[RMDB]
RNA sequence: GGGAACGACUCGAGUAGAGUCGAAAAGGUGUGUGGCGCUCGUCAUGAAGAUAAACAAAAUUAUCGAAUAUAUUGUAGUAGCAAUCAUCGUUCUAGUGUGGACUUACUUCAUUGUCAUUAAAGAAAUACCGUUACUCGAGUUCGCUCGAGUAACGGUAAAAGAAACAACAACAACAAC
Reactivity to 2A3 in 0.01 (KOAc 150mM, MgCl2 10mM, bicine 150mM(pH8.5), 24C), signal-to-noise 1, nucleotides 027 to 126: g020g000u000g000u010g050u080g050g050c030g000c060u040c030g160u030c000a010u030g140a000a150g040a060u000a000a060a000c030a040a000a020a040u170u020a000u100c000g020a000a030u130a000u030a050u040u130g020u030a130g150u090a100g010c000a000a020u000c020a010u010c090g000u020u040c110u070a010g000u000g010u000g040g050a050c000u000u000a000c000u000u090c030a130u080u000g080u090c000a050u000u300a030a030a000g020a030a140a000u000